Chemical mapping of a 177-nucleotide RNA with DMS and 2A3. For DMS, 18,805 sequencing reads were counted. For 2A3 the reverse transcriptase was SuperScript II with manganese. Conditions: 150 mM KOAc, 10 mM MgCl2 and 150 mM bicine (pH 8.5), 24 C.
[RMDB]
RNA sequence: GGGAACGACUCGAGUAGAGUCGAAAAUUCAUGGAGACCCAUCCCACACUGGAUGCCUUACACUGUGACAUCGGCAAUGCCACUGAGUUUUACAAAAUAUUCCAAGAUGAGAUUAGGGAGGUGUCUCACCACUAAUCAUGUUCGCAUGAUUAGUGGUAAAAGAAACAACAACAACAAC
Reactivity to DMS in 0.01 (KOAc 150mM, MgCl2 10mM, bicine 150mM(pH8.5), 24C), signal-to-noise 8, nucleotides 027 to 126: u040u010c050a080u020g010g000a050g010a050c020c020c020a130u010c020c000c010a200c100a080c080u000g000g010a040u000g010c110c080u010u010a050c070a090c050u010g000u000g020a070c060a020u010c120g010g000c180a100a070u020g000c020c010a050c060u000g000a090g000u000u000u020u030a100c210a070a040a050a090u030a080u010u010c020c020a050a080g030a120u010g000a070g010a110u030u030a060g010g000g010a110g010g010u010g010u010c000u000c030
Reactivity to 2A3 in 0.01 (KOAc 150mM, MgCl2 10mM, bicine 150mM(pH8.5), 24C), signal-to-noise 9, nucleotides 027 to 126: u070u030c040a040u110g080g010a020g010a020c020c000c020a130u010c010c000c000a060c000a010c030u030g010g010a020u060g020c010c010u090u090a050c090a040c060u060g030u050g050a020c000a070u050c040g080g010c070a070a050u090g010c000c000a040c030u040g040a030g090u060u070u060u050a080c090a020a120a030a040u170a110u080u010c010c000a060a050g080a210u120g030a040g050a120u090u170a100g000g030g010a010g000g010u120g000u020c000u000c000